An RNA of 177 nucleotides, treated with 2A3 and read out base by base.
RNA sequence: GGGAACGACUCGAGUAGAGUCGAAAAGUAGAGGAAAGAUCUAUAUAACACAAUAUAUGUUAUUGUGUUUUCUGAUAACAAUUAUCGUGAUUGUCUAAUCUCUUCAUAUUGUUUAUUCAAGUAGAAAGUUCAUUUCUGAUUUCGAUCAGAAGUGAACAAAAGAAACAACAACAACAAC
Reactivity to 2A3 in 0.01 (KOAc 150mM, MgCl2 10mM, bicine 150mM(pH8.5), 24C), signal-to-noise 2, nucleotides 027 to 126: g010u030a000g010a000g000g070a060a060a100g010a000u000c020u020a150u000a010u050a110a010c000a000c000a000a030u040a000u040a040u300g270u300u030a000u000u010g000u000g000u000u000u030u000c080u000g000a000u020a200a040c210a170a270u230u040a020u130c130g050u010g040a030u000u000g040u030c020u000a030a010u050c010u000c010u020u000c010a030u040a000u080u090g060u030u030u090a120u120u160c000a020a040g040u050a050g290a060a130a040

The data come from the RNA Mapping Database (RMDB), library OK1LIB.